[RMDB]
RNA sequence: GGGAACGACUCGAGUAGAGUCGAAAACUCCAGAGAUGACUUCACAGAGGAGCGCCUGGCCAAGCUGCAGGACCCAUUCUCUCUAUACCGCUGCCACACCAUCAUGAACUGCACAAGGACCUGUCCUAAGGUACGUGGGGCUGGUGACCCUCAGCUCCCAAUCGCAUCGAUUCGUCGAUGCGAUUGGAAAAGAAACAACAACAACAAC
Reactivity to 2A3 in 0.01 (KOAc 150mM, MgCl2 10mM, bicine 150mM(pH8.5), 24C), signal-to-noise 1, nucleotides 027 to 156: c050u000c010c010a020g020a000g040a200u090g040a060c030u030u010c120a070c060a080g080a120g070g000a040g000c050g040c000c000u020g050g000c030c010a110a040g030c020u060g020c060a090g060g040a140c080c080c000a010u080u000c060u000c000u000c000u050a030u070a270c060c020g020c030u020g100c050c010a050c010a000c030c010a040u140c030a020u070g130a110a100c030u030g000c110a020c010a150a010g030g010a010c000c050u000g060u090c000c020u040a090a070g010g000u030a070c030g050u060g030g060g000g000c040u040g000g080u000g040a060c000c020c000u100c030a000g000c000u010c060
Structure probing data (2A3) for a 207-nucleotide construct.
It was measured as part of the RMDB library OK3TST.
Reactivities are rounded to 0.1 and cut off at 0 and 3.